[RMDB]
RNA sequence: GGGAACGACUCGAGUAGAGUCGAAAACGUGACGGAGAGUUCCUCACGCUGCAGAUCGAGAAUCUAGCCGAGCGUCGACCGUCGCUGGUCAUUGGCGAUACACUGCGAGUCAUUAAUCCCUGGUCGACACGGUAAUGCAGUUCGCUGCAUUACCGUGAAAAGAAACAACAACAACAAC
Reactivity to DMS in 0.01 (KOAc 150mM, MgCl2 10mM, bicine 150mM(pH8.5), 24C), signal-to-noise 3, nucleotides 027 to 126: c110g000u010g000a030c110g010g030a110g010a160g010u020u000c000c020u000c050a030c020g000c050u000g000c090a050g000a080u000c050g030a170g000a100a090u000c010u000a090g000c010c220g020a120g000c070g000u000c070g020a090c000c010g030u000c010g010c030u000g000g010u010c210a150u030u000g020g020c030g000a120u000a060c070a080c120u000g010c040g000a040g020u000c020a190u010u020a080a120u000c000c010c020u030g000g000u000c070g020a140
Reactivity to 2A3 in 0.01 (KOAc 150mM, MgCl2 10mM, bicine 150mM(pH8.5), 24C), signal-to-noise 3, nucleotides 027 to 126: c010g010u030g020a010c030g030g000a150g010a040g180u070u010c010c000u000c010a020c030g050c030u050g000c000a000g000a060u040c050g270a010g070a300a060u030c030u020a080g080c070c070g200a040g030c020g000u030c060g020a060c010c000g000u010c010g000c050u100g070g040u170c080a150u060u090g030g000c010g000a030u040a100c080a020c030u300g140c050g010a000g020u000c010a010u080u080a080a100u050c010c000c000u010g060g070u070c030g000a060